[RMDB]
RNA sequence: GGGAACGACUCGAGUAGAGUCGAAAAGAUAUGGAUCGUCAGCAUGGGAGUCCCGGAUCGGAAACGAUCCGAAGGACGACGAUCAUGGCGAUCCUAAGUCAAACCUAAGCGCUUCGGCGCUUAGGAAUCCCGUAACCAAGUUCGCUUGGUUACGGGAAAAAGAAACAACAACAACAAC
Reactivity to 2A3 in 0.01 (KOAc 150mM, MgCl2 10mM, bicine 150mM(pH8.5), 24C), signal-to-noise 1, nucleotides 027 to 126: g020a000u040a030u080g010g010a000u010c000g030u010c000a060g170c120a300u300g050g030g000a040g020u000c000c040c000g040g000a000u040c010g000g000a000a020a000c000g000a000u000c030c010g030a160a040g010g010a000c000g060a140c000g010a020u050c050a070u080g020g040c020g020a010u000c000c000u000a010a020g030u000c030a130a000a230c000c000u000a010a000g000c000g000c060u060u130c300g130g000c020g020c000u000u000a000g000g020a000a060
Reactivity to DMS in 0.01 (KOAc 150mM, MgCl2 10mM, bicine 150mM(pH8.5), 24C), signal-to-noise 1, nucleotides 027 to 126: g000a000u000a060u000g000g000a000u000c000g050u000c000a100g010c300a190u000g000g010g000a080g050u000c000c020c010g000g000a040u000c000g030g000a050a000a100c010g020a000u010c000c010g000a070a050g030g010a010c000g000a110c260g020a010u000c040a150u000g040g000c020g010a010u000c000c000u020a000a110g000u000c000a110a110a210c000c000u010a010a010g010c000g000c000u000u010c300g020g010c030g020c000u000u000a000g000g010a020a080
The record gives the reactivity of an RNA of 177 nucleotides to 2A3 and DMS. The reactions ran in a buffer of 150 mM KOAc, 10 mM MgCl2 and 150 mM bicine (pH 8.5), at 24 C. It was measured as part of the RMDB library TTRDES. For 2A3, 2,076 sequencing reads were counted.